[RMDB]
This 207-nucleotide RNA was probed chemically with DMS and 2A3. For DMS the reverse transcriptase was MarathonRT. For 2A3, 2,597 sequencing reads were counted. The RNA was probed in 150 mM KOAc, 10 mM MgCl2 and 150 mM bicine (pH 8.5) at 24 C.
RNA sequence: GGGAACGACUCGAGUAGAGUCGAAAACUGCAGGUCAACGGACACUCUUCAGAUCAGCUAUUGCAGAAGAAAGGUCAGCCAAGCGCUCUGGGCCGUGUCGACUGUAUAUAGGAGCUUCUGAUUUCAACCAGAAGCUAACUCUCUCCGAAACAAUGAGAUCCUAUGCUAGUUUCGACUAGCAUAGGAUAAAAGAAACAACAACAACAAC
Reactivity to DMS in 0.01 (KOAc 150mM, MgCl2 10mM, bicine 150mM(pH8.5), 24C), signal-to-noise 2, nucleotides 027 to 156: c040u000g000c050a020g040g000u010c000a130a120c060g030g000a120c030a070c090u020c040u000u000c060a020g010a090u010c080a120g020c030u010a100u000u000g000c030a140g010a080a150g000a060a060a080g010g030u000c030a100g020c030c060a110a090g000c070g010c090u010c000u010g020g010g020c040c010g030u000g010u000c000g020a180c020u000g030u010a110u010a100u010a030g000g010a040g010c000u010u000c000u000g020a060u000u000u010c180a000a060c030c000a030g000a020a040g030c000u010a020a010c060u000c040u000c030u000c040c010g010a150a060a100c070a040a090u010g000a220g000
Reactivity to 2A3 in 0.01 (KOAc 150mM, MgCl2 10mM, bicine 150mM(pH8.5), 24C), signal-to-noise 4, nucleotides 027 to 156: c020u030g000c000a010g060g150u120c050a060a040c070g050g030a000c010a010c020u060c030u110u110c040a040g010a200u040c020a030g030c020u120a080u230u170g000c030a030g020a180a020g040a060a140a020g040g030u050c040a020g020c040c020a100a030g010c020g000c050u040c030u030g020g040g000c030c010g020u040g030u050c000g010a050c010u020g040u020a040u020a010u060a170g130g000a020g010c000u000u000c000u000g090a150u150u260u210c080a050a050c040c000a000g010a020a000g000c000u010a030a040c010u010c010u000c020u020c030c050g120a070a080a030c070a110a080u150g010a040g010